The record gives the reactivity of an RNA of 177 nucleotides to 2A3.
The data come from the RNA Mapping Database (RMDB), library RFM100.
For 2A3 the reverse transcriptase was SuperScript II with manganese.
RNA sequence: GGGAACGACUCGAGUAGAGUCGAAAAAGCUCCGGUGUACGCACCGGAGCAAAGGGAGAAAAGCUGGGCUGAGAGGCGACUGGUGUCUAAUUUGUUUGUCUCUCCAACUCAGACUGCCUGGCCCAAACUGCCCUAAGCCGUUCGCGGCUUAGGGCAGAAAAGAAACAACAACAACAAC
Reactivity to 2A3 in 0.01 (KOAc 150mM, MgCl2 10mM, bicine 150mM(pH8.5), 24C), signal-to-noise 1, nucleotides 027 to 126: a000g000c000u040c020c000g000g050u030g000u100a060c200g000c060a040c000c010g010g000a000g000c000a000a000a000g030g000g020a000g110a000a000a000a140g050c000u000g050g000g000c060u050g000a000g000a000g000g040c000g000a010c000u000g100g000u130g080u290c140u260a230a030u010u130u080g060u000u000u040g010u030c000u000c000u000c050c000a010a010c000u000c000a000g010a300c000u010g000c000c010u010g000g050c010c000c000a020a000a000